[RMDB]
RNA sequence: GGGAACGACUCGAGUAGAGUCGAAAAUGUGCUAUUCGUAGCACAAAAAAGAUAUGGAUCUAUGAAUAACAGCCACAUCGUUUGACGUCGGAAACGACCGAGAUGUGGAACUACUGUUACAUAGAUCCUAAGUCAAAAAUCCCUUUUCGAAGGGAAAGGGUGAAUGUUUAUUCGUAAACAUUCACCCAAAAGAAACAACAACAACAAC
Reactivity to DMS in 0.01 (KOAc 150mM, MgCl2 10mM, bicine 150mM(pH8.5), 24C), signal-to-noise 2, nucleotides 027 to 156: u030g010u010g000c020u000a040u010u010c300g020u020a020g040c000a010c010a000a010a060a150a080a120g000a100u000a300u000g010g000a020u010c010u020a010u000g010a100a190u000a010a010c010a000g000c000c000a020c000a010u000c000g020u000u000u000g000a100c140g020u000c010g000g000a150a130a170c010g030a020c030c010g000a050g040a040u000g000u000g020g010a040a010c030u010a300c000u000g000u000u010a030c010a010u000a010g010a020u000c010c000u000a010a040g020u010c040a010a060a070a080a160u000c000c000c010u000u000u000u000c210g010a040a050g000g090g030a020a040a050
Reactivity to 2A3 in 0.01 (KOAc 150mM, MgCl2 10mM, bicine 150mM(pH8.5), 24C), signal-to-noise 4, nucleotides 027 to 156: u060g000u000g000c010u020a080u070u140c300g150u080a020g000c010a000c000a000a060a020a050a020a100g040a030u060a050u090g010g000a010u010c000u000a000u010g080a240a160u170a030a010c000a000g010c000c000a010c000a010u010c050g110u090u180u240g070a120c060g010u010c000g000g060a130a060a110c020g020a000c000c030g060a050g000a070u000g010u000g010g010a010a000c000u080a010c010u010g000u000u000a000c000a010u000a000g000a000u000c000c000u000a000a000g000u010c010a000a000a010a090a150u130c070c050c000u020u000u020u020c130g030a020a000g020g030g010a070a050a060